Source: RMDB library PDB130, as collected in RNAgym. The record gives the reactivity of an RNA of 207 nucleotides to DMS and 2A3. Conditions: 150 mM KOAc, 10 mM MgCl2 and 150 mM bicine (pH 8.5), 24 C.
RNA sequence: GGGAACGACUCGAGUAGAGUCGAAAAUUUCGGAUGAUCAGCCACACUGGGACUGAGACACGGCCCGGACUCCCACGGGGGGCAGCAGUGGGGAAUCUUGGACAAUGGGCGAAAGCCGAUCCAGCAAUAUCGCGUGAGUGAAGAAAGGCAAUGCCGCGACAUAUUGCUAGUUCGCUAGCAAUAUGUCAAAAGAAACAACAACAACAAC
Reactivity to DMS in 0.01 (KOAc 150mM, MgCl2 10mM, bicine 150mM(pH8.5), 24C), signal-to-noise 1, nucleotides 027 to 156: u000u010u010c020g040g020a110u000g020a140u000c010a050g020c070c010a100c050a060c080u000g020g000g000a080c030u010g020a110g020a120c040a060c030g020g000c010c020c020g040g010a110c000u000c020c040c010a100c080g010g000g060g030g020g050c090a040g010c020a060g000u000g010g010g000g000a050a030u000c020u000u010g050g000a100c040a090a180u000g040g020g010c000g000a080a070a160g060c040c040g000a090u000c030c030a100g000c060a060a090u020a040u020c030g000c020g030u020g000a100g020u010g000a110a090g030a070a100a080g020g070c020a060a090u010g000c030c050g040c150
Reactivity to 2A3 in 0.01 (KOAc 150mM, MgCl2 10mM, bicine 150mM(pH8.5), 24C), signal-to-noise 2, nucleotides 027 to 156: u120u110u080c020g010g020a030u040g040a020u120c050a020g060c030c000a060c030a040c150u090g020g000g080a090c030u030g030a020g010a080c040a030c030g030g000c010c020c000g030g020a030c020u000c000c020c030a020c020g040g000g020g030g010g000c010a060g010c020a010g030u050g010g010g010g030a020a050u040c040u080u080g000g010a030c030a060a120u080g050g000g000c020g040a050a030a010g000c000c010g020a020u020c030c010a000g010c010a060a080u050a020u260c040g000c040g080u050g040a050g020u070g020a020a070g030a030a030a010g040g050c030a040a090u150g020c030c020g020c020